RNA sequence: GGGAACGACUCGAGUAGAGUCGAAAAGUGAAUAUAGCUAUAGCUGUAUAUCUAUAAGAUAUGAGUGUCUUAUAGAUAUAUGCUUGUAUCUGUAAGAUUCUGUAUCUUUCAAUCUAUCCUGCUUAGGAGACAGAAGAUAUUUCGAUAUCUUCUGUCUAAAAGAAACAACAACAACAAC
Reactivity to DMS in 0.01 (KOAc 150mM, MgCl2 10mM, bicine 150mM(pH8.5), 24C), signal-to-noise 5, nucleotides 027 to 126: g010u010g010a100a140u010a030u000a030g010c060u000a070u010a050g000c010u010g010u000a010u000a010u000c000u000a030u000a000a010g000a010u000a080u010g010a180g020u010g000u000c000u000u000a010u000a000g000a010u000a000u000a010u000g010c050u000u010g020u000a010u000c010u000g010u000a040a060g000a070u000u010c140u000g000u000a030u000c030u000u000u000c110a050a120u010c120u000a120u010c010c010u000g010c150u010u010a080g010g010
Reactivity to 2A3 in 0.01 (KOAc 150mM, MgCl2 10mM, bicine 150mM(pH8.5), 24C), signal-to-noise 2, nucleotides 027 to 126: g030u030g020a110a060u090a000u030a090g000c030u040a020u100a230g000c000u010g020u020a000u000a030u000c000u010a050u010a070a000g010a010u040a100u220g160a090g160u130g000u020c010u000u010a000u030a050g010a000u000a000u000a000u010g000c000u010u060g020u040a050u000c050u040g040u050a030a050g000a080u100u000c050u130g110u080a030u010c000u040u040u020c000a050a060u010c020u060a100u030c000c010u030g080c090u130u130a100g100g160
Structure probing data (DMS and 2A3) for a 177-nucleotide construct. The RNA was probed in 150 mM KOAc, 10 mM MgCl2 and 150 mM bicine (pH 8.5) at 24 C. For 2A3 the reverse transcriptase was SuperScript II with manganese. 2A3 is a SHAPE reagent: it acylates the 2'-hydroxyl of flexible nucleotides of all four kinds.